The record gives the reactivity of an RNA of 177 nucleotides to 2A3 and DMS.
[RMDB]
RNA sequence: GGGAACGACUCGAGUAGAGUCGAAAAGAAAGAAAGAAAGAAGUUGGUCCGAGGGUUGUGGGUUAUUGUUAAGCUGAUUUAACAUUGUCUCCCCCCACAACCACGCUUGACUAGCUUUGUGUUUUAAAAUACCUUAGUUAUUCGUAACUAAGGUAUUAAAAGAAACAACAACAACAAC
Reactivity to 2A3 in 0.01 (KOAc 150mM, MgCl2 10mM, bicine 150mM(pH8.5), 24C), signal-to-noise 9, nucleotides 027 to 126: g130a020a080a010g090a020a080a010g090a030a150a010g030a000a000g010u010u010g010g000u020c060c050g050a260g040g010g000u000u000g010u010g010g030g030u100u150a090u090u050g010u010u010a030a010g060c140u100g250a190u110u010u010a000a000c010a020u030u100g180u050c100u120c060c000c000c000c000c000a000c000a000a000c000c000a000c000g010c040u110u140g000a000c000u010a000g000c000u020u020u020g050u010g010u010u000u010u050a060a110
Reactivity to DMS in 0.01 (KOAc 150mM, MgCl2 10mM, bicine 150mM(pH8.5), 24C), signal-to-noise 9, nucleotides 027 to 126: g010a110a090a090g010a100a080a090g010a090a100a150g000a020a010g010u000u000g000g000u000c000c060g010a160g010g000g010u000u000g010u000g000g010g010u020u020a040u010u010g010u000u000a010a030g020c290u030g010a130u020u000u000a010a010c010a030u010u010g010u010c110u010c030c050c060c000c000c000a010c010a000a000c000c000a020c040g010c260u020u010g000a020c000u000a020g010c000u000u000u000g010u000g010u000u000u000u000a070a120

Conditions: 150 mM KOAc, 10 mM MgCl2 and 150 mM bicine (pH 8.5), 24 C.